Source: RMDB library ARCHII, as collected in RNAgym. Structure probing data (2A3 and DMS) for a 207-nucleotide construct. For DMS the reverse transcriptase was MarathonRT. For DMS, 3,189 sequencing reads were counted.
RNA sequence: GGGAACGACUCGAGUAGAGUCGAAAAAUUGGUUGGUGAAAACGUGGUGUGUGUCGUCGUUCUUGUACUCGAGGACCCCACACUCCUUUUCGAAAGGGCGGGUCUCGAGGCACACACUGCAAUACUCUAUACCACACACUGACCAAAACAUGGGUUAGGAUGGAAAUAAGUUCGCUUAUUUCCAUCCAAAAGAAACAACAACAACAAC
Reactivity to 2A3 in 0.01 (KOAc 150mM, MgCl2 10mM, bicine 150mM(pH8.5), 24C), signal-to-noise 4, nucleotides 027 to 156: a010u030u010g010g000u000u000g000g010u010g080a080a030a030a040c120g000u020g010g010u030g010u000g000u010g040u040c070g010u020c020g020u040u010c050u040u090g070u110a150c020u000c000g010a040g040g140a110c010c020c000c010a080c010a060c060u110c000c000u040u060u050u200c260g130a130a020a000g030g010g020c020g010g000g000u000c000u000c000g010a010g000g000c000a010c000a000c000a010c010u010g000c010a000a020u070a070c040u040c030u120a080u080a160c070c000a010c000a000c000a000c040u000g010a020c000c000a020a000a010a040c120a140u180g030g070g010u020u060a050
Reactivity to DMS in 0.01 (KOAc 150mM, MgCl2 10mM, bicine 150mM(pH8.5), 24C), signal-to-noise 1, nucleotides 027 to 156: a210u000u000g010g010u000u000g000g080u000g000a040a040a010a110c160g010u000g010g000u000g100u000g010u000g020u010c080g020u000c050g030u010u000c040u000u000g030u020a060c000u000c000g050a110g030g010a070c050c010c000c030a080c130a040c070u000c010c010u000u000u000u000c100g000a110a010a020g020g030g000c210g000g020g010u000c010u010c000g010a050g000g000c060a000c060a030c040a080c030u000g090c020a050a050u000a040c070u020c050u020a080u000a060c010c010a030c040a240c020a010c020u000g000a030c000c010a010a030a060a080c070a120u000g000g010g020u000u000a160